The data come from the RNA Mapping Database (RMDB), libraries RFM100 and RFMREP. The record gives the reactivity of an RNA of 177 nucleotides to DMS and 2A3. The RNA was probed in 150 mM KOAc, 10 mM MgCl2 and 150 mM bicine (pH 8.5) at 24 C. For DMS the reverse transcriptase was MarathonRT. 2A3 adducts were read by reverse transcription with SuperScript II with manganese.
RNA sequence: GGGAACGACUCGAGUAGAGUCGAAAAACAUCUCAAGUUCCCAAACCCCCGGAAGUUGCCCGCACAGCGUCCAUCUUGGAACCGUCUCGAUCCAAGGCACGCCAAACCUCUGGAACCCACCCGAGAGAUAAAAGUCCUUAUUCGUAAGGACUUUUAUAAAAGAAACAACAACAACAAC
Reactivity to DMS in 0.01 (KOAc 150mM, MgCl2 10mM, bicine 150mM(pH8.5), 24C), signal-to-noise 6, nucleotides 027 to 126: a110c170a080u010c020u000c010a120a210g000u000u000c000c000c010a120a120a300c060c010c010c010c000g010g010a060a120g000u020u010g010c070c020c080g020c070a060c070a110g010c030g000u010c020c070a070u010c030u020u000g000g000a060a080c090c040g000u020c020u000c040g020a100u010c010c020a040a060g000g030c100a070c060g020c030c040a040a100a110c070c010u020c030u010g010g020a090a070c030c020c020a070c050c020c030g000a090g010a100g000
Reactivity to 2A3 in 0.01 (KOAc 150mM, MgCl2 10mM, bicine 150mM(pH8.5), 24C), signal-to-noise 5, nucleotides 027 to 126: a010c060a130u080c050u040c110a030a040g000u020u020c000c000c020a020a060a090c030c000c000c000c000g020g040a030a020g060u120u090g050c010c020c000g000c010a020c010a040g030c010g030u030c030c020a050u030c030u010u060g030g020a050a050c040c020g100u040c030u030c070g050a050u020c010c010a020a010g020g020c020a010c050g020c020c010a040a070a040c000c010u020c030u040g050g030a040a060c000c020c000a030c000c010c010g070a050g000a000g010